[RMDB]
RNA sequence: GGGAACGACUCGAGUAGAGUCGAAAAGAUAUGGAUUAGAAGGCUCGAUAAGAUGUCAUUCGGAAACGAAUGCAUCUUUUGACGAGCCCUAAUCCUAAGUCAAAACAGUUUCCUUCGGGAAACUGAACAUGUUGUGACGGUUCGCCGUCACAACAUGAAAAGAAACAACAACAACAAC
Reactivity to 2A3 in 0.01 (KOAc 150mM, MgCl2 10mM, bicine 150mM(pH8.5), 24C), signal-to-noise 1, nucleotides 027 to 126: g020a000u070a010u090g000g010a000u010u020a050g090a300a280g060g010c020u020c020g180a230u080a300a000g020a000u010g160u300c010a000u010u010c020g000g040a010a040a030c010g000a020a000u000g030c000a000u010c000u000u000u030u140g220a020c000g020a000g000c020c000c000u000a000a000u000c000c000u000a030a000g050u000c030a030a010a160a240c000a020g000u030u000u040c000c000u050u120c300g190g000g000a020a020a000c010u000g020a030a040
Reactivity to DMS in 0.01 (KOAc 150mM, MgCl2 10mM, bicine 150mM(pH8.5), 24C), signal-to-noise 2, nucleotides 027 to 126: g020a020u000a150u010g010g000a010u010u000a000g000a240a200g020g010c000u020c000g090a220u010a010a010g000a000u000g000u020c020a000u000u000c010g030g010a030a030a040c000g010a020a000u000g010c010a000u000c000u000u010u000u010g000a240c140g000a010g020c000c000c000u000a000a000u000c000c000u000a010a070g000u000c010a120a100a140a210c010a010g000u000u010u000c000c000u000u010c300g030g020g000a020a000a000c000u000g010a080a200
Source: RMDB library TTRDES, as collected in RNAgym. Structure probing data (2A3 and DMS) for a 177-nucleotide construct. The reactions ran in a buffer of 150 mM KOAc, 10 mM MgCl2 and 150 mM bicine (pH 8.5), at 24 C.